Structure probing data (DMS and 2A3) for a 177-nucleotide construct. The reactions ran in a buffer of 150 mM KOAc, 10 mM MgCl2 and 150 mM bicine (pH 8.5), at 24 C. DMS adducts were read by reverse transcription with MarathonRT. Reactivities are given for positions 27 through 126. The data come from the RNA Mapping Database (RMDB), library OK2TST. For DMS, 6,585 sequencing reads were counted. For 2A3 the reverse transcriptase was SuperScript II with manganese.

RNA sequence: GGGAACGACUCGAGUAGAGUCGAAAAGGGUGUGCCCGGUCUGGUUCAGGCUGGCCCCGCGCUGCUUUUUGACCUCGGCCAGCACCUGCCGCCGCGCCGCCGGGUCCGUGCUGGUCACGGCGAGCGCGCCCCCAUCCUGUUUCGACAGGAUGGGGGCAAAAGAAACAACAACAACAAC
Reactivity to DMS in 0.01 (KOAc 150mM, MgCl2 10mM, bicine 150mM(pH8.5), 24C), signal-to-noise 4, nucleotides 027 to 126: g010g000g010u000g020u000g010c120c030c070g030g000u000c040u000g010g000u000u010c160a050g010g010c020u010g030g010c020c030c110c130g010c110g020c020u010g000c050u010u000u010u010u000g000a070c020c010u010c150g020g010c030c040a140g010c050a060c040c020u000g000c060c010g010c120c070g020c040g000c020c020g010c010c010g000g000g000u000c020c020g010u010g010c190u020g020g010u000c010a030c010g010g010c010g010a100g000c020g020c020
Reactivity to 2A3 in 0.01 (KOAc 150mM, MgCl2 10mM, bicine 150mM(pH8.5), 24C), signal-to-noise 3, nucleotides 027 to 126: g040g000g020u050g020u050g060c060c060c050g010g010u030c050u080g110g000u120u170c050a030g020g020c020u070g050g030c010c000c010c000g030c110g020c000u090g020c000u130u150u050u160u230g070a080c000c030u040c050g000g010c000c010a010g000c030a030c000c010u030g030c020c040g060c010c020g040c010g000c020c000g000c020c000g000g000g000u000c010c000g050u200g150c160u190g000g000u020c010a010c020g000g000c000g020a130g030c000g000c010